[RMDB]
RNA sequence: GGGAACGACUCGAGUAGAGUCGAAAAGAUAUGGAUGUGUAAGGGAGCUGUUGUCGGAAACGACCAGCGACGAUCUUAACAUCCUAAGUCAAAGUUGUGAGUUUUAGUUCGCUAAAACUCACAACAAGAAGUCACUGAAGUUCGCUUCAGUGACUUCAAAAGAAACAACAACAACAAC
Reactivity to 2A3 in 0.01 (KOAc 150mM, MgCl2 10mM, bicine 150mM(pH8.5), 24C), signal-to-noise 2, nucleotides 027 to 126: g030a010u040a060u160g000g000a010u000g070u100g110u100a020a000g030g030g010a000g000c000u050g040u300u210g000u060c000g010g020a090a100a040c010g010a000c010c000a010g000c020g030a100c000g010a000u000c010u010u010a000a000c010a000u020c020c000u020a120a010g020u030c060a160a090a070g000u000u020g000u010g000a010g010u000u000u000u010a020g010u030u040c270g010c140u000a010a000a000a010c000u000c000a000c000a000a010c000a000a000
Reactivity to DMS in 0.01 (KOAc 150mM, MgCl2 10mM, bicine 150mM(pH8.5), 24C), signal-to-noise 2, nucleotides 027 to 126: g010a010u000a300u010g000g000a000u000g000u000g000u010a000a030g000g030g000a040g010c000u000g010u000u000g010u010c010g010g000a100a080a260c000g020a030c010c010a000g010c000g010a010c180g000a020u000c000u000u000a030a020c000a020u000c000c000u000a030a050g000u000c040a120a110a150g000u000u010g010u010g030a020g030u000u000u000u000a000g010u000u020c220g020c030u000a000a000a000a000c000u010c000a000c010a010a000c000a070a060